Conditions: 150 mM KOAc, 10 mM MgCl2 and 150 mM bicine (pH 8.5), 24 C. The record gives the reactivity of an RNA of 177 nucleotides to DMS and 2A3.

RNA sequence: GGGAACGACUCGAGUAGAGUCGAAAAGAUAUGGACCGUGGUGUAGCAGAGCCUACCGAUGGGCAUAUCGGAAACGAUAUGUUACUGACGUAGGCGACGAAGCUACACGUAACAUCGGUCCUAAGUCCAGAUAUAUAGUCUUCGGACUAUAUAUCUGAAAAGAAACAACAACAACAAC
Reactivity to DMS in 0.01 (KOAc 150mM, MgCl2 10mM, bicine 150mM(pH8.5), 24C), signal-to-noise 9, nucleotides 027 to 126: g000a060u000a190u010g000g000a010c000c000g040u000g010g010u000g000u000a000g030c000a050g000a210g020c000c000u000a000c000c000g000a260u000g000g000g000c000a010u000a000u000c000g010g000a070a060a140c000g010a010u000a000u000g010u000u000a100c000u000g000a300c300g000u000a000g010g010c000g000a020c160g000a090a110g010c000u000a000c000a000c000g010u000a020a030c250a010u010c010g010g000u000c000c000u000a010a080g000u000c030
Reactivity to 2A3 in 0.01 (KOAc 150mM, MgCl2 10mM, bicine 150mM(pH8.5), 24C), signal-to-noise 2, nucleotides 027 to 126: g030a030u070a040u140g000g000a000c010c000g000u010g030g010u010g010u010a010g000c030a010g000a010g050c000c010u000a010c000c010g020a020u030g000g010g000c000a000u000a000u010c010g000g000a040a040a000c010g000a000u010a000u020g120u030u120a300c010u010g010a000c010g010u010a000g000g040c000g000a010c000g010a020a010g010c000u000a000c000a000c000g000u000a010a020c030a250u300c010g000g000u000c000c000u010a050a000g020u030c030
Background:
DMS adducts were read by reverse transcription with MarathonRT. For DMS, 23,369 sequencing reads were counted. Source: RMDB library TTRDES, as collected in RNAgym.